This 177-nucleotide RNA was probed chemically with DMS and 2A3. As a SHAPE reagent, 2A3 marks flexible, mostly unpaired nucleotides at the ribose 2'-OH. Source: RMDB library TTRDEL, as collected in RNAgym. Conditions: 150 mM KOAc, 10 mM MgCl2 and 150 mM bicine (pH 8.5), 24 C.
RNA sequence: GGGAACGACUCGAGUAGAGUCGAAAAGAUAUGGACUAAGACUGAUGACCGUUCGUAACAUCAUUCGGAAACGAAUGUGGAACGCAAGGUCGAUGUCCUAAGUCAAACUGGCACUUCGGUGCCAGAACGAGGUAGCAACGUUCGCGUUGCUACCUCGAAAAGAAACAACAACAACAAC
Reactivity to DMS in 0.01 (KOAc 150mM, MgCl2 10mM, bicine 150mM(pH8.5), 24C), signal-to-noise 1, nucleotides 027 to 126: g010a120u000a170u060g000g010a030c010u010a300a290g000a010c010u000g000a170u000g000a050c180c010g030u000u000c000g000u000a030a080c040a050u000c000a010u000u000c000g000g020a070a090a100c010g030a000a000u010g000u000g000g000a010a000c000g030c120a050a110g000g010u010c000g000a150u000g010u000c000c000u000a070a130g000u000c000a080a050a140c010u010g010g010c000a010c000u000u000c100g050g000u000g010c000c000a000g000a080a130
Reactivity to 2A3 in 0.01 (KOAc 150mM, MgCl2 10mM, bicine 150mM(pH8.5), 24C), signal-to-noise 1, nucleotides 027 to 126: g050a010u070a060u190g000g030a000c000u050a090a000g010a000c010u070g040a230u240g050a190c040c060g010u060u030c050g080u160a080a050c020a120u240c000a020u030u000c000g070g020a000a030a000c000g000a020a000u010g040u010g040g030a020a010c000g000c070a080a110g000g000u020c000g010a010u110g000u000c000c000u010a090a010g000u000c000a000a020a130c030u000g000g000c000a020c020u070u090c300g110g000u000g010c030c000a000g000a010a000